An RNA of 207 nucleotides, treated with 2A3 and DMS and read out base by base. For DMS the reverse transcriptase was MarathonRT. 2A3 adducts were read by reverse transcription with SuperScript II with manganese. The reactions ran in a buffer of 150 mM KOAc, 10 mM MgCl2 and 150 mM bicine (pH 8.5), at 24 C. Reactivities are given for positions 27 through 156. For DMS, 4,498 sequencing reads were counted. The data come from the RNA Mapping Database (RMDB), library OK3TST.
RNA sequence: GGGAACGACUCGAGUAGAGUCGAAAAUUGUGUCAUUUGAAUUCCAACAGCAAGUGGCACUAACUUUCGGGCAGUUGGAAUUCCUGGAAGUGACUCAGUGCUCCUAAUCUAAGUACUGAGUGAACUUGUCAACUAAGAUUAGGAGUUGGCAAGUGUAAAUUUAAUCCACUUUCGAGUGGAUUAAAUUAAAAGAAACAACAACAACAAC
Reactivity to 2A3 in 0.01 (KOAc 150mM, MgCl2 10mM, bicine 150mM(pH8.5), 24C), signal-to-noise 2, nucleotides 027 to 156: u120u140g010u000g000u020c000a000u010u010u020g090a110a100u300u110c130c060a070a070c020a140g060c010a010a000g000u010g000g010c000a020c010u020a060a030c000u020u030u000c000g010g000g000c030a150g010u080u140g080g210a120a110u130u000c000c010u000g010g020a020a030g000u030g040a000c000u000c000a000g000u000g000c000u070c030c040u130a200a230u170c060u090a080a030g020u010a020c000u000g000a000g000u030g000a010a010c000u010u000g000u000c000a000a000c000u020a080a020g060a230u110u210a070g190g020a040g010u000u000g020g000c020a000a000g000u010g000u020a020
Reactivity to DMS in 0.01 (KOAc 150mM, MgCl2 10mM, bicine 150mM(pH8.5), 24C), signal-to-noise 2, nucleotides 027 to 156: u000u000g030u010g020u010c000a020u000u000u000g000a090a130u000u000c090c140a120a110c170a210g020c010a020a040g030u000g010g030c010a040c010u010a020a020c020u000u000u000c020g000g030g050c050a110g000u010u000g010g000a110a200u000u000c010c030u000g010g000a060a090g010u010g020a100c000u000c010a010g010u000g010c010u000c030c050u000a190a170u020c160u000a050a040g010u000a040c000u010g010a060g020u000g020a050a030c020u000u010g000u010c010a020a020c010u000a120a170g010a300u010u010a150g000g000a080g030u000u010g010g010c000a010a030g010u000g010u000a070